The record gives the reactivity of an RNA of 207 nucleotides to 2A3 and DMS. It was measured as part of the RMDB library OK3TST. The 2A3 profile rests on 7,466 reads. The DMS profile rests on 5,379 reads.
[RMDB]
RNA sequence: GGGAACGACUCGAGUAGAGUCGAAAACACGAUGGAUUCCAACAACACAGCCACGUAGAGAUGGGGCUCGUCGGUGAUGCGUUUGAUGAGUCAGAUCUCAACACGCUCGCAGGCGGAACGGGGAUUGGGCAUGUUCGGUAUCCAACCUCUGGCGGUGGACGUAGUUGUAAUUCGUUACAACUACGUCAAAAGAAACAACAACAACAAC
Reactivity to 2A3 in 0.01 (KOAc 150mM, MgCl2 10mM, bicine 150mM(pH8.5), 24C), signal-to-noise 7, nucleotides 027 to 156: c100a020c060g130a120u100g030g020a040u090u040c050c010a050a030c030a050a010c050a050c010a060g020c000c020a060c050g030u070a040g000a000g010a060u040g050g010g020g000c020u010c020g010u000c030g010g100u080g080a140u220g080c090g050u070u090u190g050a070u020g010a000g030u040c040a020g040a240u020c000u000c000a020a050c080a010c020g010c010u070c060g090c040a040g040g030c030g030g000a050a000c040g010g010g000g020a080u050u110g050g020g020c070a050u060g060u070u080c060g010g000u020a040u000c000c010a010a040c020c000u080c040u060g070g000c040g060g040u080g070
Reactivity to DMS in 0.01 (KOAc 150mM, MgCl2 10mM, bicine 150mM(pH8.5), 24C), signal-to-noise 2, nucleotides 027 to 156: c070a090c100g010a210u010g040g000a140u000u000c060c030a090a120c080a090a140c030a080c080a040g090c010c000a060c020g020u000a140g020a070g020a070u000g020g000g020g010c020u010c000g070u010c000g040g060u000g020a090u060g040c100g040u010u000u000g030a090u000g000a030g040u000c020a210g010a060u010c000u000c010a050a100c060a030c020g010c000u000c030g000c080a130g000g000c070g010g020a070a070c030g020g010g010g020a140u010u000g010g010g040c060a100u010g010u000u000c090g050g070u000a050u000c030c000a040a050c020c010u010c020u000g010g000c060g000g040u000g010